[RMDB]
Chemical mapping of a 177-nucleotide RNA with DMS and 2A3. For 2A3, 5,887 sequencing reads were counted. Conditions: 150 mM KOAc, 10 mM MgCl2 and 150 mM bicine (pH 8.5), 24 C.
RNA sequence: GGGAACGACUCGAGUAGAGUCGAAAAAUGCUGUUAUCAUUAAUUCAAACUUUGCAAUCGAACAAAAACUAAAUCCUAAAAAAGAUUCUAUUGCUGUAGAAAGUGCGAAAGAUAAUCCUUAUGCAAAACUAUUAACACACUUCGGUGUGUUAAUAGUAAAAGAAACAACAACAACAAC
Reactivity to DMS in 0.01 (KOAc 150mM, MgCl2 10mM, bicine 150mM(pH8.5), 24C), signal-to-noise 3, nucleotides 027 to 126: a080u000g000c040u030g010u060u040a010u000c020a090u000u030a080a130u000u000c040a040a300a040c010u010u000u000g010c010a000a020u020c060g010a000a010c030a040a120a080a130a100c130u000a100a030a090u020c090c100u020a010a010a020a090a080a110g000a130u010u000c010u010a020u000u000g020c000u020g050u050a070g020a070a010a040g020u010g000c300g020a030a040a030g000a060u010a000a040u000c070c090u000u050a070u020g000c090a040a040a080
Reactivity to 2A3 in 0.01 (KOAc 150mM, MgCl2 10mM, bicine 150mM(pH8.5), 24C), signal-to-noise 6, nucleotides 027 to 126: a000u080g010c030u080g010u050u020a040u030c030a060u050u230a300a080u030u000c010a000a040a030c020u070u100u060g000c000a020a000u020c050g040a020a000c020a070a140a070a050a080c060u150a050a090a190u180c070c060u220a140a100a030a010a020a020g010a060u000u000c000u000a010u010u010g010c040u040g050u130a130g190a170a070a000g020u020g010c030g030a030a010a030g010a000u030a030a010u060c050c070u130u160a090u120g040c030a020a050a100